This 177-nucleotide RNA was probed chemically with 2A3 and DMS.
RNA sequence: GGGAACGACUCGAGUAGAGUCGAAAAGAUAUGGAGAGCCGUGCCAAUGAUGCUGCUCGGAAACGAGCAGUUGAGGAACUACACGGGACUCUCCUAAGUCAAACUGGUUAUGUUCGCAUAACCAGAAGAUUAAGGUACUCUUCGGAGUACCUUAAUCAAAAGAAACAACAACAACAAC
Reactivity to 2A3 in 0.01 (KOAc 150mM, MgCl2 10mM, bicine 150mM(pH8.5), 24C), signal-to-noise 3, nucleotides 027 to 126: g030a010u040a010u120g010g000a000g010a000g050c010c000g010u000g030c020c070a130a300u160g020a000u060g040c000u000g000c000u000c000g000g000a040a040a030c000g000a000g000c010a000g010u000u020g000a010g020g010a090a060c150u210a020c220a000c020g040g000g120a120c000u000c000u030c010c000u000a040a000g020u030c030a050a050a140c010u000g020g000u000u000a000u010g020u040u080c300g030c130a000u000a000a000c000c000a000g000a010a020
Reactivity to DMS in 0.01 (KOAc 150mM, MgCl2 10mM, bicine 150mM(pH8.5), 24C), signal-to-noise 4, nucleotides 027 to 126: g010a030u000a170u010g000g000a020g010a000g000c000c000g000u000g000c010c050a110a160u010g010a120u000g010c000u000g000c000u000c000g000g000a050a040a090c000g010a000g000c000a010g000u000u000g000a280g000g000a090a050c060u010a170c000a010c000g010g000g000a140c020u000c010u000c000c000u010a000a050g000u000c020a090a100a220c010u000g000g010u000u000a010u000g020u000u010c220g020c010a030u000a000a010c000c000a000g000a080a070
The data come from the RNA Mapping Database (RMDB), library TTRDEL. The 2A3 profile rests on 5,843 reads. Conditions: 150 mM KOAc, 10 mM MgCl2 and 150 mM bicine (pH 8.5), 24 C. For DMS, 5,908 sequencing reads were counted. In probing experiments dimethyl sulfate is read out at A N1 and C N3, which are open when not base-paired.